[RMDB]
RNA sequence: GGGAACGACUCGAGUAGAGUCGAAAAAUAAUCAUCGAAUACUUCGUAAGAUACUCCUUCAUGAACAUAAUCAGUUACAAAACGUUUAUAUGAAGUAAAGUAUCUACGAUUUUUACAAAAGUCAGGAUGCAUAAGUACAAAGUACGCGAUAAACGGAGCAGUAAUGUUUCUUCGGAAACAUUACUGCAAAAGAAACAACAACAACAAC
Reactivity to 2A3 in 0.01 (KOAc 150mM, MgCl2 10mM, bicine 150mM(pH8.5), 24C), signal-to-noise 2, nucleotides 027 to 156: a000u230a020a000u080c020a020u030c150g030a060a060u070a280c000u030u000c010g000u010a040a060g000a000u000a000c000u110c180c020u030u000c030a020u020g030a090a060c020a010u130a130a050u150c110a080g080u170u110a090c050a030a180a030a020c010g020u060u010u020a050u080a000u030g000a010a000g000u000a040a040a040g000u000a000u010c000u000a000c000g000a000u000u000u020u030u010a060c020a120a070a050a000g030u040c050a030g100g070a020u030g000c020a020u010a080a020g030u000a020c020a070a070a000g020u040a030c060g000c020g050a020u120a130a040a000c050g020g030a060
The data come from the RNA Mapping Database (RMDB), library OK3TST. This 207-nucleotide RNA was probed chemically with 2A3. For 2A3, 812 sequencing reads were counted. As a SHAPE reagent, 2A3 marks flexible, mostly unpaired nucleotides at the ribose 2'-OH.